[RMDB]
RNA sequence: GGGAACGACUCGAGUAGAGUCGAAAAGCCGCCGUCAGCUCGUACCGUGAGGCGUCCUGUUAAGUCAGGCAACGAGCGAGACCCGCACUUCUAGUUGCCAGCAAUACCCUUGAGGUAGUUGGGUACAAGAGAAUUUGUCAUUCGUGACAAAUUCUCUAAAAGAAACAACAACAACAAC
Reactivity to 2A3 in 0.01 (KOAc 150mM, MgCl2 10mM, bicine 150mM(pH8.5), 24C), signal-to-noise 4, nucleotides 027 to 126: g010c010c010g000c000c010g080u070c050a000g010c000u010c020g020u080a090c050c030g100u090g070a060g040g040c030g040u140c000c000u020g010u030u090a130a200g230u020c010a000g000g030c020a010a020c020g010a020g010c020g000a010g000a050c030c000c020g010c040a030c020u050u030c030u060a040g040u130u100g000c000c010a000g010c010a000a110u050a120c020c000c000u070u280g100a200g060g010u020a030g000u010u040g040g000g000u060a040c040a030
Reactivity to DMS in 0.01 (KOAc 150mM, MgCl2 10mM, bicine 150mM(pH8.5), 24C), signal-to-noise 3, nucleotides 027 to 126: g010c050c010g000c070c080g000u000c000a210g060c010u000c020g000u030a210c060c030g000u030g010a190g000g010c170g000u040c010c000u020g000u010u000a040a110g010u000c030a050g020g020c210a120a030c030g000a040g000c030g010a110g000a060c060c060c040g000c080a110c070u000u010c050u010a070g000u000u010g000c020c000a070g020c050a040a140u000a040c010c000c000u000u020g000a130g000g010u000a020g010u000u010g000g000g000u000a040c100a150